Annotation: Source: RMDB library TTRDES, as collected in RNAgym. An RNA of 177 nucleotides, treated with 2A3 and DMS and read out base by base. For 2A3, 3,044 sequencing reads were counted. For DMS, 1,125 sequencing reads were counted. DMS adducts were read by reverse transcription with MarathonRT. The RNA was probed in 150 mM KOAc, 10 mM MgCl2 and 150 mM bicine (pH 8.5) at 24 C.
[RMDB]
RNA sequence: GGGAACGACUCGAGUAGAGUCGAAAAGAUAUGGACGUACCGGCACUUUUGACGGCUAUGAUUCGGAAACGAAUCUAAGGCCGAUAAGUGCGUACGUCCUAAGUCAAACAGACGCUUCGGCGUCUGAGAUUCCCUCACGGUUCGCCGUGAGGGAAUCAAAAGAAACAACAACAACAAC
Reactivity to 2A3 in 0.01 (KOAc 150mM, MgCl2 10mM, bicine 150mM(pH8.5), 24C), signal-to-noise 2, nucleotides 027 to 126: g040a000u050a040u150g000g000a000c000g030u010a010c120c180g300g000c010a030c060u080u150u290u300g300a290c170g000g010c020u030a040u230g010a000u010u000c000g000g000a020a020a020c030g010a000a000u000c000u020a210a130g090g030c000c000g030a020u070a050a010g000u020g000c010g000u000a000c010g010u030c000c020u000a020a000g000u010c000a000a060a120c000a010g000a000c000g000c010u060u170c300g120g000c010g000u000c010u000g010a010
Reactivity to DMS in 0.01 (KOAc 150mM, MgCl2 10mM, bicine 150mM(pH8.5), 24C), signal-to-noise 2, nucleotides 027 to 126: g000a040u010a300u020g000g010a000c000g020u000a010c090c300g030g070c000a010c000u000u000u000u000g050a230c100g000g000c000u000a300u000g000a000u000u010c000g000g000a110a160a130c010g020a010a010u000c000u020a050a170g010g030c000c000g030a070u020a010a000g030u010g020c020g020u000a000c000g030u000c000c010u000a000a020g020u010c020a130a140a300c030a010g000a010c000g030c010u010u050c240g000g040c010g000u000c010u010g010a040